[RMDB]
RNA sequence: GGGAACGACUCGAGUAGAGUCGAAAAUUGACACACGUGUGCAUUCUGAGUUCAAUUUGCCAGGUUGUGAUGGCGGUAGUUUGUAUGUUAACAAGCACGCUUUUCAUACACCAGCAUAUGAUGUGAGUAGCUGCGGGGUUCGCCCCGCAGAAAAGAAACAACAACAACAAC
Reactivity to 2A3 in 0.01 (KOAc 150mM, MgCl2 10mM, bicine 150mM(pH8.5), 24C), signal-to-noise 3, nucleotides 027 to 129: u050u090g030a000c030a000c000a010c070g030u010g020u070g020c010a000u140u030c020u070g080a030g130u060u090c040a030a150u020u010u020g000c000c010a020g000g000u000u000g020u010g000a030u000g000g000c000g040g080u090a090g000u010u030u030g110u050a170u100g250u070u180a090a020c010a000a000g000c000a000c000g000c000u120u120u040u040c010a000u020a000c040a010c010c020a000g000c000a010u060a040u120g050a070u050g040u040g070a120g030u050a020g000
Reactivity to DMS in 0.01 (KOAc 150mM, MgCl2 10mM, bicine 150mM(pH8.5), 24C), signal-to-noise 2, nucleotides 027 to 129: u040u010g010a140c070a050c020a020c090g030u010g030u000g020c010a090u030u000c060u060g010a170g010u020u040c000a000a000u090u040u000g000c000c020a080g000g060u020u000g060u010g040a050u000g070g020c020g030g040u040a120g020u000u010u030g020u000a030u010g040u050u030a140a040c000a080a000g020c020a000c000g010c020u030u020u050u000c020a020u030a020c090a030c030c040a120g010c000a030u030a070u030g000a040u000g000u030g000a020g030u040a100g000
The data come from the RNA Mapping Database (RMDB), library 15KLIB.
The record gives the reactivity of an RNA of 170 nucleotides to 2A3 and DMS.
The reactions ran in a buffer of 150 mM KOAc, 10 mM MgCl2 and 150 mM bicine (pH 8.5), at 24 C.
For 2A3 the reverse transcriptase was SuperScript II with manganese.
DMS adducts were read by reverse transcription with MarathonRT.
The DMS profile rests on 7,531 reads.
Reactivities are given for positions 27 through 129.